An RNA of 177 nucleotides, treated with 2A3 and DMS and read out base by base. DMS adducts were read by reverse transcription with MarathonRT.
RNA sequence: GGGAACGACUCGAGUAGAGUCGAAAAAGGCUCGCCGCCCGCAAGAUCAUCACUGUCUGCCUCGAUCCUGUCCAGAAGCGGAUUUUUUUCAAUUUCCAUGUCGAGAAACUGAUCGAGCUCGAUAUGAGCUCCAGUGGAUAUUCGUAUCCACUGGAGCAAAAGAAACAACAACAACAAC
Reactivity to 2A3 in 0.01 (KOAc 150mM, MgCl2 10mM, bicine 150mM(pH8.5), 24C), signal-to-noise 1, nucleotides 027 to 126: a000g050g000c000u020c000g040c000c000g050c000c000c000g000c040a070a060g030a100u030c040a010u060c030a060c080u050g020u030c010u050g050c020c020u010c000g020a030u000c010c030u060g070u060c040c040a080g030a140a030g070c050g000g040a010u160u020u030u000u000u050u100c060a040a030u130u040u070c030c000a000u030g000u000c000g020a020g000a060a170a060c080u100g020a100u080c050g010a030g020c000u020c000g000a010u020a030u050g040a020
Reactivity to DMS in 0.01 (KOAc 150mM, MgCl2 10mM, bicine 150mM(pH8.5), 24C), signal-to-noise 2, nucleotides 027 to 126: a110g030g000c020u010c040g000c050c030g000c050c010c050g030c110a070a050g000a050u000c050a040u010c080a070c090u000g010u000c010u000g010c050c010u010c040g010a050u010c020c080u000g000u020c040c060a090g010a090a090g000c090g010g000a010u000u000u000u000u000u000u000c120a080a120u000u000u000c090c000a040u000g020u010c030g010a030g020a080a030a040c060u000g000a030u010c060g000a090g010c000u000c000g000a010u000a020u000g000a190
Overview
The reactions ran in a buffer of 150 mM KOAc, 10 mM MgCl2 and 150 mM bicine (pH 8.5), at 24 C.